[RMDB]
RNA sequence: GGGAACGACUCGAGUAGAGUCGAAAAAAGUGAUUAUUCGUAAUCACUUCACGCCGGGCGCGGUGGCGCGUCCCUGUAGUCCCAGCUACUCGGGAGGCUAAACGACGUACCCGUUCGCGGGUACGAAUUAUGCGGAUUUAUUCGUAAAUCCGCAUAAAAAAGAAACAACAACAACAAC
Reactivity to DMS in 0.01 (KOAc 150mM, MgCl2 10mM, bicine 150mM(pH8.5), 24C), signal-to-noise 3, nucleotides 027 to 126: a030a010g010u000g000a010u000u000a010u000u010c160g020u000a020a010u000c000a010c000u010u000c060a100c130g000c050c040g000g000g000c040g000c030g000g030u010g010g020c080g010c030g000u010c040c000c020u000g000u000a040g010u000c020c020c030a140g010c030u010a040c030u000c200g000g000g010a070g000g010c060u000a040a110a130c100g000a140c010g020u000a020c000c000c000g010u000u020c200g020c030g000g000g010u000a000c000g010a020a070
Reactivity to 2A3 in 0.01 (KOAc 150mM, MgCl2 10mM, bicine 150mM(pH8.5), 24C), signal-to-noise 1, nucleotides 027 to 126: a000a000g000u000g010a020u010u020a030u050u100c210g000u040a020a000u020c000a000c000u040u030c040a040c080g020c000c000g000g000g010c060g010c020g090g060u070g080g080c010g000c030g070u030c000c000c010u050g020u070a040g040u030c000c000c010a000g030c030u060a070c000u030c090g060g000g000a060g040g030c050u090a060a090a110c050g100a000c010g020u000a000c000c020c000g000u040u040c270g020c000g050g000g020u000a000c010g000a000a000
This 177-nucleotide RNA was probed chemically with DMS and 2A3. Reactivities are given for positions 27 through 126. For DMS, 3,742 sequencing reads were counted. 2A3 is a SHAPE reagent: it acylates the 2'-hydroxyl of flexible nucleotides of all four kinds. Conditions: 150 mM KOAc, 10 mM MgCl2 and 150 mM bicine (pH 8.5), 24 C. It was measured as part of the RMDB library M2PK50. 2A3 adducts were read by reverse transcription with SuperScript II with manganese.